[RMDB]
Structure probing data (2A3 and DMS) for a 177-nucleotide construct.

RNA sequence: GGGAACGACUCGAGUAGAGUCGAAAAGGGAGUUUCUCUCCCCGGCGCCAUUUUGCUGGACUUCUACGAGGCGCUUCGGAGGGGUUAGUAUUAGAGAGUAAAAGUUAGGAAAUGUCUUUAAUAUACGCAGUGAUGACUUCUUCGGAAGUCAUUAUUGAAAAGAAACAACAACAACAAC
Reactivity to 2A3 in 0.01 (KOAc 150mM, MgCl2 10mM, bicine 150mM(pH8.5), 24C), signal-to-noise 3, nucleotides 027 to 126: g010g020g000a040g010u020u200u020c020u000c000u000c010c000c000c000g000g010c000g010c010c000a030u020u030u090u190g030c020u040g010g020a050c030u080u010c010u070a040c050g060a040g000g000c000g000c000u040u030c020g020g010a070g010g020g000g030u050u070a010g010u010a030u050u040a030g020a010g020a010g050u100a010a070a030a000g050u060u090a030g050g090a070a130a140u120g040u000c000u030u030u010a090a020u050a010u010a030c050g010
Reactivity to DMS in 0.01 (KOAc 150mM, MgCl2 10mM, bicine 150mM(pH8.5), 24C), signal-to-noise 9, nucleotides 027 to 126: g010g000g010a170g010u010u020u030c000u010c000u000c000c010c070c080g000g000c050g010c050c030a040u030u030u030u030g010c060u020g000g000a120c090u010u020c030u000a070c050g010a080g010g010c040g010c020u010u020c300g010g010a050g020g000g000g000u020u030a070g010u010a020u010u010a020g000a030g010a050g010u020a050a070a050a090g000u030u030a080g010g010a070a090a080u010g000u000c010u000u000u010a010a040u020a040u010a090c160g010

For 2A3 the reverse transcriptase was SuperScript II with manganese.
For DMS, 31,973 sequencing reads were counted.
Values cover nucleotides 27 to 126.
The reactions ran in a buffer of 150 mM KOAc, 10 mM MgCl2 and 150 mM bicine (pH 8.5), at 24 C.
For DMS the reverse transcriptase was MarathonRT.